RNA sequence: GGGAACGACUCGAGUAGAGUCGAAAACAGCUACUCGGGAGGCUGAGGCUGGAGGAUCGCUUGAGUCCAGGAGUUCUGGGCUGUAGUGCGCUAUGCCGAUCGGGUGUCCGCACUAAGUUCGGCAUCAAUAUGGUGACCUCCCGGGAGCGGGGGACCAGGUGAUAUUACAGUUCGCUGUAAUAUCACCAAAAGAAACAACAACAACAAC
Reactivity to DMS in 0.01 (KOAc 150mM, MgCl2 10mM, bicine 150mM(pH8.5), 24C), signal-to-noise 1, nucleotides 027 to 156: c050a050g030c000u000a090c020u000c030g010g000g010a060g020g020c030u010g020a070g020g030c030u000g000g010a120g060g000a130u000c050g000c040u000u000g000a120g000u010c000c020a040g000g010a220g000u000u010c010u010g020g010g010c000u010g030u000a040g100u010g000c020g060c000u000a090u000g000c000c000g020a120u000c060g000g030g000u000g030u020c190c140g000c050a080c020u020a090a100g000u000u000c000g010g000c040a010u000c050a110a150u000a080u000g020g030u000g000a080c010c000u000c010c010c030g010g010g010a090g020c000g000g000g010g020g030a110c000c060a240
Reactivity to 2A3 in 0.01 (KOAc 150mM, MgCl2 10mM, bicine 150mM(pH8.5), 24C), signal-to-noise 6, nucleotides 027 to 156: c030a020g010c010u130a170c000u130c000g010g000g000a010g020g000c080u100g030a030g050g050c040u050g020g070a080g070g040a140u080c040g020c060u060u100g150a000g000u000c010c010a000g030g080a190g080u270u160c000u000g000g000g000c000u010g010u050a010g000u010g020c020g000c050u050a030u080g000c000c010g070a150u060c060g050g000g010u010g010u000c020c070g050c000a020c020u100a170a080g030u050u020c010g000g000c010a010u010c010a040a170u130a090u290g060g010u070g070a200c000c000u010c000c000c010g000g010g000a010g000c000g000g000g000g000g000a020c000c040a010